RNA sequence: GGGAACGACUCGAGUAGAGUCGAAAAGAUAUGGAUCACCGCGAUAAGCUGGAUUCGGAAACGAAUCCCAGCUUUUGACGCAGGUGAUCCUAAGUCAAAUCCAUAAUGUGUUCGCACAUUAUGGAAACGUAUCGAACUUGUUCGCAAGUUCGAUACGAAAAGAAACAACAACAACAAC
Reactivity to 2A3 in 0.01 (KOAc 150mM, MgCl2 10mM, bicine 150mM(pH8.5), 24C), signal-to-noise 2, nucleotides 027 to 126: g040a000u050a030u110g010g000a000u010c000a020c000c020g020c000g040a120u100a300a000g000c010u000g010g000a010u000u020c000g000g010a010a030a010c000g010a000a000u030c070c000c040a000g000c020u020u020u040u170g040a020c020g030c120a190g000g000u000g010a000u010c000c000u010a020a000g020u000c040a120a070a060u050c000c000a000u020a010a000u000g030u000g040u080u100c300g020c130a000c010a000u000u000a000u000g000g000a050a020a000
Reactivity to DMS in 0.01 (KOAc 150mM, MgCl2 10mM, bicine 150mM(pH8.5), 24C), signal-to-noise 3, nucleotides 027 to 126: g000a020u000a300u010g000g000a020u000c000a000c000c000g020c000g000a160u000a030a020g010c000u000g000g000a030u000u000c000g000g000a070a030a140c000g010a010a010u000c140c090c050a000g000c000u000u000u000u020g020a220c090g020c000a120g060g010u000g000a010u000c000c000u000a000a080g030u000c040a070a080a140u010c000c000a000u000a000a000u000g010u000g020u020u010c230g030c000a010c000a010u000u000a000u000g000g000a010a050a020